[RMDB]
RNA sequence: GGGAACGACUCGAGUAGAGUCGAAAAUCAAAUAUAAAGUAUUGGUCAUGGACUGGCGCGUUUAUAUUAUCGCUACUGUUCUGGGCCGAGUUAAUCUGGAUUGCCGUCUAAUCUCGUCAAAGCCCGAGUCUCAGUUGCAGUUCGCUGCAACUGAGACAAAAGAAACAACAACAACAAC
Reactivity to 2A3 in 0.01 (KOAc 150mM, MgCl2 10mM, bicine 150mM(pH8.5), 24C), signal-to-noise 1, nucleotides 027 to 126: u050c000a090a200a000u210a050u150a040a110a030g100u150a130u020u020g010g010u000c000a050u130g000g000a060c050u020g000g050c000g000c010g070u050u140u000a300u030a040u130u000a000u080c000g000c020u070a070c030u000g020u180u000c070u030g000g000g030c010c010g000a000g010u050u100a080a210u000c020u050g000g000a130u060u090g050c030c000g000u000c000u040a030a030u040c000u000c010g010u030c000a060a080a050g010c040c040c000g030a000